An RNA of 177 nucleotides, treated with DMS and read out base by base. For DMS the reverse transcriptase was MarathonRT. For DMS, 1,290 sequencing reads were counted. The RNA was probed in 150 mM KOAc, 10 mM MgCl2 and 150 mM bicine (pH 8.5) at 24 C.
RNA sequence: GGGAACGACUCGAGUAGAGUCGAAAAAUAUGGCUAAUUGUAGUGGGGGCAAAAGGAUGAUGGAGAUGGAAUUGUUGACAUUUGAGUCAUGUAGGAAGAAACAAAGGGUGAUUAUUGAUGCCUUGUAAGUCGACAAACAUUUCGAUGUUUGUCGACUAAAAGAAACAACAACAACAAC
Reactivity to DMS in 0.01 (KOAc 150mM, MgCl2 10mM, bicine 150mM(pH8.5), 24C), signal-to-noise 1, nucleotides 027 to 126: a070u000a050u020g010g010c030u010a100a150u010u030g010u030a070g040u000g000g010g010g000g020c090a020a040a090a050g030g060a030u000g000a100u010g010g000a130g000a060u000g020g000a070a090u000u000g030u010u000g010a080c030a150u000u020u000g000a150g010u000c020a050u000g000u000a030g000g000a040a070g010a070a060a090c150a010a110a070g020g000g010u000g010a100u010u000a110u000u000g000a060u020g000c030c020u000u000g000u000a100